Structure probing data (DMS) for a 177-nucleotide construct. It was measured as part of the RMDB library TTRDEL. In probing experiments dimethyl sulfate is read out at A N1 and C N3, which are open when not base-paired. For DMS, 3,849 sequencing reads were counted. For DMS the reverse transcriptase was MarathonRT.
RNA sequence: GGGAACGACUCGAGUAGAGUCGAAAAGAUAUGGAUUUAGCCCACUACCCACCCUGAUCGGAAACGAUACCAGGAGGUGGGCACAAAUCCUAAGUCAAACGGUACGGUUCUUCGGAACCGUACCGAACUCAAUAUCAACGUUCGCGUUGAUAUUGAGAAAAGAAACAACAACAACAAC
Reactivity to DMS in 0.01 (KOAc 150mM, MgCl2 10mM, bicine 150mM(pH8.5), 24C), signal-to-noise 4, nucleotides 027 to 126: g010a040u000a300u000g000g000a010u000u000u000a190g010c010c000c010a020c040u000a100c060c070c130a300c110c010c020u000g010a060u000c020g000g000a120a100a160c020g010a020u000a060c290c030a010g020g000a080g010g010u000g000g000g020c000a010c130a040a020a010u000c000c000u000a040a120g010u000c010a070a070a210c020g010g000u000a000c010g000g010u000u000c000u000u010c170g010g000a000a010c000c000g000u000a000c000c000g000a010a030